An RNA of 177 nucleotides, treated with DMS and 2A3 and read out base by base. The data come from the RNA Mapping Database (RMDB), library OK2TST. For DMS the reverse transcriptase was MarathonRT.
RNA sequence: GGGAACGACUCGAGUAGAGUCGAAAAGAGGGCGUAGUGUUAAAUAGUGAGGAGGAGGAGGAUGAGGACAAAGACACUAAGACAAUAAUAUCACUACUCACGGAGAUUAGGGAUGAACUAAGAGAUCACCCAUUUCUGAUUUCGAUCAGAAAUGGGUAAAAGAAACAACAACAACAAC
Reactivity to DMS in 0.01 (KOAc 150mM, MgCl2 10mM, bicine 150mM(pH8.5), 24C), signal-to-noise 2, nucleotides 027 to 126: g030a100g010g030g010c070g040u010a060g020u010g020u000u000a070a070a100u010a110g040u020g010a090g000g000a090g060g030a130g000g010a100g010g000a130u010g000a060g020g020a090c110a070a080a030g000a070c050a070c090u000a060a120g010a110c130a060a050u000a070a090u000a040u010c070a070c000u020a030c020u000c040a080c140g000g000a040g000a070u000u000a030g010g020g000a090u010g010a090a070c160u000a060a100g010a080g000a090u000c150
Reactivity to 2A3 in 0.01 (KOAc 150mM, MgCl2 10mM, bicine 150mM(pH8.5), 24C), signal-to-noise 2, nucleotides 027 to 126: g080a010g000g000g020c110g040u100a050g040u060g020u070u090a070a150a160u070a060g050u060g010a030g030g020a020g000g020a030g000g040a020g080g000a040u030g010a040g020g000a000c050a020a070a010g020a010c030a000c080u060a000a060g090a040c050a000a060u130a100a040u060a050u140c030a000c040u050a010c020u040c030a060c060g090g000a080g030a050u030u090a030g010g000g000a030u040g040a010a040c020u040a100a040g020a000g020a100u080c040
Conditions: 150 mM KOAc, 10 mM MgCl2 and 150 mM bicine (pH 8.5), 24 C. For 2A3 the reverse transcriptase was SuperScript II with manganese.